RNA sequence: GGGAACGACUCGAGUAGAGUCGAAAAGAUAUGGAUUUAGGGAGGUGGACUGCUACCCACCUCGGAAACGAGAGGCAGUUACCGAGGAUCUAAAUCCUAAGUCAAAACUAAGCGUUCGCGCUUAGAAGAUAUGAGAAUACUUCGGUAUUCUCAUAUCAAAAGAAACAACAACAACAAC
Reactivity to 2A3 in 0.01 (KOAc 150mM, MgCl2 10mM, bicine 150mM(pH8.5), 24C), signal-to-noise 5, nucleotides 027 to 126: g080a040u210a180u280g000g000a010u000u010u010a020g010g020g010a020g000g000u040g050g030a020c010u010g000c000u120a200c010c020c000a020c000c000u000c000g000g010a040a050a010c000g000a000g000a010g030g000c000a000g000u010u000a000c000c000g050a280g000g010a010u000c000u020a000a000a020u000c010c000u020a100a020g120u110c080a050a000a170a200c010u010a010a000g000c000g060u060u150c300g030c000g010c100u000u010a000g010a030a040
Reactivity to DMS in 0.01 (KOAc 150mM, MgCl2 10mM, bicine 150mM(pH8.5), 24C), signal-to-noise 5, nucleotides 027 to 126: g010a110u000a180u010g010g000a020u010u000u000a010g000g000g010a030g010g040u000g010g020a020c010u000g000c000u000a120c050c010c030a300c110c000u000c010g000g000a110a070a190c010g010a010g000a120g000g000c010a020g010u000u000a010c000c020g010a040g010g000a040u010c010u000a000a010a020u000c010c000u000a040a100g000u010c170a090a100a090a180c010u000a000a000g010c000g020u000u020c230g020c010g010c000u000u000a010g000a090a100